[RMDB]
RNA sequence: GGGAACGACUCGAGUAGAGUCGAAAAGUUUAUCUUCGAGUUUUGUGCUUUGCACAAAACAUCGCAUUAUUGUAUGCAGUUUGUGAACAAACUGCUUGAAAAAACUUUUUUCGCAAAUUGAUAUUUGACCUCAUAAAAUCUUCGGAUUUUAUGAGGUAAAAGAAACAACAACAACAAC
Reactivity to DMS in 0.01 (KOAc 150mM, MgCl2 10mM, bicine 150mM(pH8.5), 24C), signal-to-noise 1, nucleotides 027 to 126: g000u000u000u000a090u020c090u000u000c000g010a080g010u000u000u000u000g030u010g000c000u030u000u010g030c000a020c010a000a000a000a000c010a050u000c010g010c170a050u000u000a110u000u000g020u020a020u000g010c000a030g020u000u000u000g000u010g000a190a230c000a000a000a020c000u000g030c000u000u020g000a000a010a130a060a040a030c020u000u000u000u000u020u010c040g010c050a050a070a120u000u000g000a140u000a170u010u000u000g000
Reactivity to 2A3 in 0.01 (KOAc 150mM, MgCl2 10mM, bicine 150mM(pH8.5), 24C), signal-to-noise 1, nucleotides 027 to 126: g000u090u000u000a040u010c010u030u030c000g000a000g010u000u010u000u010g010u000g040c070u160u150u300g030c000a000c000a000a000a000a000c040a260u000c040g000c000a060u010u120a130u180u200g080u150a030u100g000c000a010g010u020u000u060g040u050g300a250a010c000a000a000a000c040u000g000c080u010u010g010a000a000a000a000a000a000c020u140u000u010u000u000u070c040g000c300a110a100a200u090u170g070a060u070a090u230u030u150g040
Structure probing data (DMS and 2A3) for a 177-nucleotide construct. The data come from the RNA Mapping Database (RMDB), library RFMREP. Conditions: 150 mM KOAc, 10 mM MgCl2 and 150 mM bicine (pH 8.5), 24 C.